[RMDB]
RNA sequence: GGGAACGACUCGAGUAGAGUCGAAAAGAAGUCAGAGAAAAGAUGCGAAAAUGCCUGCGAAAAGAAAAGAAAAGCAUCGAAAAGUAGUGGAAAGCAGGCGUAACACUACGAAAUCUGACUGAAGAAAGGGUAAUCUAAAGUUCGCUUUAGAUUACCCAAAAGAAACAACAACAACAAC
Reactivity to 2A3 in 0.01 (KOAc 150mM, MgCl2 10mM, bicine 150mM(pH8.5), 24C), signal-to-noise 2, nucleotides 027 to 126: g140a010a010g010u020c000a000g010a000g050a050a050a000a040g010a010u000g000c020g090a070a070a050a010u060g000c000c010u020g010c030g070a040a150a140a150g100a040a100a040a000g120a000a220a020a000g000c000a010u000c000g000a000a100a050a000g010u010a000g000u000g020g030a050a000a030g000c000a000g000g000c000g000u020a000a000c000a000c000u000a000c000g000a040a010a000u000c000u000g010a000c000u010g000a100a030g060a070a040a030
Reactivity to DMS in 0.01 (KOAc 150mM, MgCl2 10mM, bicine 150mM(pH8.5), 24C), signal-to-noise 3, nucleotides 027 to 126: g000a150a000g010u000c010a030g000a060g000a100a080a110a190g000a000u010g000c020g010a080a120a170a150u030g000c010c010u000g000c010g000a110a020a070a140g000a110a100a060a100g000a070a140a140a120g020c000a000u000c000g000a080a040a080a090g000u000a000g020u010g050g000a090a060a080g010c000a000g000g000c020g020u010a060a150c020a020c000u000a000c000g000a060a030a190u000c000u000g000a000c010u000g000a040a070g010a100a060a100